RNA sequence: GGGAACGACUCGAGUAGAGUCGAAAAUGGGGUACAUCAUGUGACAUGUGGGUGGAGUGAGGAGAUCAUGUCUGAUCUAGACCAUGGUGAUUAGAAAAUGCUUCUUGGAAUGAGUGGUGUCCGCGCACGACUUGUUGUCUUUCGAGACAACAAGUCGAAAAGAAACAACAACAACAAC
Reactivity to DMS in 0.01 (KOAc 150mM, MgCl2 10mM, bicine 150mM(pH8.5), 24C), signal-to-noise 2, nucleotides 027 to 126: u020g010g010g000g010u000a060c070a080u010c070a060u000g000u000g000a070c140a110u000g000u010g000g010g000u020g030g000a070g000u020g000a080g010g010a070g000a030u010c000a030u010g000u000c060u000g010a070u010c020u000a080g000a100c120c080a020u000g010g000u000g010a130u000u000a070g000a040a060a110a080u000g000c080u000u010c010u010u010g010g020a060a120u010g010a090g030u000g010g010u000g000u010c040c050g010c140g000c130a120
Reactivity to 2A3 in 0.01 (KOAc 150mM, MgCl2 10mM, bicine 150mM(pH8.5), 24C), signal-to-noise 1, nucleotides 027 to 126: u120g010g010g050g010u040a030c010a050u020c040a000u150g070u090g110a060c040a030u070g000u120g060g010g050u080g040g010a120g040u080g060a050g000g040a070g000a020u040c020a010u120g050u060c080u070g030a050u000c030u070a000g030a060c000c070a040u030g000g000u040g080a060u060u070a080g040a030a080a000a050u120g010c070u070u070c050u070u030g000g070a090a090u090g000a030g040u020g000g020u010g030u000c000c030g030c010g000c050a010